[RMDB]
RNA sequence: GGGAACGACUCGAGUAGAGUCGAAAAGAUAUGGAGUGAAGGGAGCUCUGUGUCGGAAACGACACUGAGCGACGAUCUUUCUCCUAAGUCAAAGUAAUCACAGCUUGUUCGCAAGCUGUGAUUACAACGAGAAACUUAUCUUCGGAUAAGUUUCUCGAAAAGAAACAACAACAACAAC
Reactivity to DMS in 0.01 (KOAc 150mM, MgCl2 10mM, bicine 150mM(pH8.5), 24C), signal-to-noise 2, nucleotides 027 to 126: g020a030u000a300u000g000g000a020g010u010g020a010a030g010g000g010a050g010c000u000c010u000g000u000g000u000c000g010g030a050a080a120c010g000a010c000a020c000u010g000a010g020c010g000a050c230g000a060u000c000u000u000u000c000u000c000c000u000a020a100g000u000c030a110a090a180g000u000a010a000u000c010a000c000a020g000c000u000u000g010u000u030c210g030c010a010a000g000c010u000g000u000g000a000u010u000a010c000a040a110
Reactivity to 2A3 in 0.01 (KOAc 150mM, MgCl2 10mM, bicine 150mM(pH8.5), 24C), signal-to-noise 2, nucleotides 027 to 126: g030a030u070a040u120g000g000a010g030u300g080a000a000g020g000g000a010g020c010u000c010u010g000u000g000u010c000g000g000a030a040a030c010g000a010c010a000c010u010g010a010g000c010g050a050c000g000a010u000c000u000u010u000c010u000c000c000u010a130a020g000u010c030a230a010a030g000u000a000a000u000c010a010c010a000g000c010u030u010g030u190u230c300g030c190a010a010g040c020u000g000u010g000a000u010u010a000c000a000a000